[RMDB]
RNA sequence: GGGAACGACUCGAGUAGAGUCGAAAAGAGCGACUAGGCAUCGAUAUGCACGAAGAGGUUCAGCCAGACCUCGAACAAAUCCUCUCGACAGAUUUCGAGGUUGAGCACAUUCUUGCUCGGGGACUCGCCGAGGAGCACAUACCGGAAAGCCUUCGUGGGUAGUAUAGGACUUCGGUCCUAUACUACCAAAAGAAACAACAACAACAAC
Reactivity to 2A3 in 0.01 (KOAc 150mM, MgCl2 10mM, bicine 150mM(pH8.5), 24C), signal-to-noise 4, nucleotides 027 to 156: g070a010g030c010g060a060c100u140a030g010g050c010a020u040c020g050a050u040a020u180g030c030a010c130g030a040a040g040a020g030g080u140u130c060a020g030c010c000a030g020a030c010c000u010c000g000a060a010c050a020a100a030u070c040c050u070c050u070c120g100a070c040a100g090a080u040u050u000c010g000a000g040g000u020u050g040a020g020c010a020c010a100u090u080c020u080u120g040c000u010c000g000g000g000g080a160c050u060c100g070c030c020g000a030g020g020a030g020c040a030c010a090u060a030c000c000g040g000a070a080a000g000c010c000u070u060c040g060u110g090
Reactivity to DMS in 0.01 (KOAc 150mM, MgCl2 10mM, bicine 150mM(pH8.5), 24C), signal-to-noise 2, nucleotides 027 to 156: g030a120g020c030g010a030c040u000a030g030g030c040a190u010c030g010a110u000a050u000g000c070a150c060g020a140a100g000a140g000g000u000u000c060a150g020c010c000a270g020a020c020c010u010c050g000a010a110c090a070a130a120u000c020c090u000c120u000c070g020a060c080a160g010a170u000u010u000c030g000a040g010g010u000u000g000a080g020c020a040c090a140u000u000c030u000u010g020c000u000c040g000g010g020g010a120c050u000c020g010c030c000g000a070g010g000a200g020c130a090c100a040u000a060c020c020g060g000a060a110a150g010c040c020u000u000c010g030u000g000